[RMDB]
RNA sequence: GGGAACGACUCGAGUAGAGUCGAAAAGCCUAUGCUCCAAAGUCCGUUCAGAGUAAUGAGGUAUUUCUCCAUCGGUGGAAAGACCAGUUAUCUGAGCUCACUCUUUAGUAAGGUGAAGGAAAAAUGGUGAUACGUCAACCUUCGGGUUGACGUAUCAAAAAGAAACAACAACAACAAC
Reactivity to DMS in 0.01 (KOAc 150mM, MgCl2 10mM, bicine 150mM(pH8.5), 24C), signal-to-noise 2, nucleotides 027 to 126: g000c020c030u050a110u020g030c030u010c090c090a110a050a060g000u010c070c120g040u000u000c020a000g000a010g010u000a030a040u010g000a140g050g000u000a010u000u000u000c000u000c040c070a120u010c220g030g080u010g000g000a010a020a030g000a000c000c000a300g000u020u000a050u000c010u000g000a010g000c040u000c080a000c030u070c060u000u000u000a110g010u000a030a110g020g000u000g000a070a090g020g010a020a080a060a070a110u000g020g030
Reactivity to 2A3 in 0.01 (KOAc 150mM, MgCl2 10mM, bicine 150mM(pH8.5), 24C), signal-to-noise 1, nucleotides 027 to 126: g000c010c000u050a110u190g000c000u000c030c050a000a100a070g060u060c030c000g000u060u030c000a000g020a050g090u060a010a030u050g080a150g090g000u000a020u030u040u000c010u020c000c060a280u190c220g140g030u150g050g000a020a010a000g010a000c010c000a000g020u000u000a010u000c020u010g000a000g030c000u000c000a000c010u090c030u030u080u140a090g050u060a090a030g030g030u000g110a050a040g080g050a020a000a030a010a110u240g040g040

The record gives the reactivity of an RNA of 177 nucleotides to DMS and 2A3. The DMS profile rests on 994 reads. It was measured as part of the RMDB library OK2TST. DMS adducts were read by reverse transcription with MarathonRT. Reactivities are given for positions 27 through 126.